[RMDB]
An RNA of 177 nucleotides, treated with DMS and 2A3 and read out base by base. For 2A3, 34,852 sequencing reads were counted. Values cover nucleotides 27 to 126. Conditions: 150 mM KOAc, 10 mM MgCl2 and 150 mM bicine (pH 8.5), 24 C. For 2A3 the reverse transcriptase was SuperScript II with manganese.

RNA sequence: GGGAACGACUCGAGUAGAGUCGAAAACAAGCUCCUAAUGUAGCUGGUCUAGGAUAUAUCUCAUAAUUGGCGUCCAGUGAGAUAAGUAUCUUACUUACUAGAUACGAAUCGUUUCCAGGUAGGACGAUCAAGGGAAGGUCUUCGGGCCUUCUCUUGAAAAAGAAACAACAACAACAAC
Reactivity to DMS in 0.01 (KOAc 150mM, MgCl2 10mM, bicine 150mM(pH8.5), 24C), signal-to-noise 9, nucleotides 027 to 126: c140a080a060g010c040u000c040c060u010a110a130u030g010u020a020g010c010u000g000g010u010c110u010a090g000g000a050u010a060u000a030u000c010u000c010a020u010a080a130u030u020g010g010c020g010u000c010c010a170g010u000g000a020g010a020u000a040a110g010u000a010u000c010u000u010a060c160u020u020a070c100u010a040g000a050u020a120c010g000a060a070u010c010g000u000u000u000c010c010a130g010g010u020a100g000g000a020c020g000a140
Reactivity to 2A3 in 0.01 (KOAc 150mM, MgCl2 10mM, bicine 150mM(pH8.5), 24C), signal-to-noise 9, nucleotides 027 to 126: c050a020a030g020c010u040c020c030u160a140a100u280g080u120a030g010c020u020g030g040u030c050u050a040g010g050a020u030a000u010a010u070c010u000c020a020u030a180a130u130u160g080g000c010g010u010c010c000a010g010u010g010a010g000a010u020a050a070g060u010a010u010c010u030u040a050c020u080u060a050c050u060a030g050a120u060a070c020g030a030a060u030c020g010u010u020u000c010c010a020g080g080u090a040g030g060a010c010g010a020